[RMDB]
RNA sequence: GGGAACGACUCGAGUAGAGUCGAAAACGCGCCGGUAUGAUUGCUCCUGAUGCAACGACUUUUGAAUAUGUUAAAAACCGCCCUCUUGCUCCCAAGGGCGAUGAUUGGGAACAGGCCGUGGCUUAUACCUAGCGUAUAUCUUCGGAUAUACGCUAGGAAAAGAAACAACAACAACAAC
Reactivity to 2A3 in 0.01 (KOAc 150mM, MgCl2 10mM, bicine 150mM(pH8.5), 24C), signal-to-noise 1, nucleotides 027 to 126: c030g010c030g060c000c020g060g060u120a090u230g190a220u110u130g020c030u030c020c030u030g040a040u060g030c020a020a050c060g100a070c040u030u110u070u070g070a080a050u170a130u280g080u070u140a120a060a040a040a010c020c010g000c010c010c000u020c020u040u100g000c020u010c000c010c000a020a000g000g000g000c000g000a010u040g010a000u040u070g000g000g020a020a040c040a010g080g000c000c010g010u040g030g020c000u130u100a140u090a190
Reactivity to DMS in 0.01 (KOAc 150mM, MgCl2 10mM, bicine 150mM(pH8.5), 24C), signal-to-noise 2, nucleotides 027 to 126: c110g010c140g010c040c020g010g020u040a070u000g020a120u000u010g020c030u000c010c030u010g000a040u000g020c110a040a140c200g010a040c020u000u000u010u010g000a130a080u010a060u010g020u000u000a050a080a080a130a050c080c020g000c030c000c010u000c050u010u000g030c040u000c020c010c030a180a030g000g000g010c010g030a020u000g000a060u000u020g010g010g010a060a040c020a050g030g010c050c030g010u010g000g020c010u000u000a100u000a170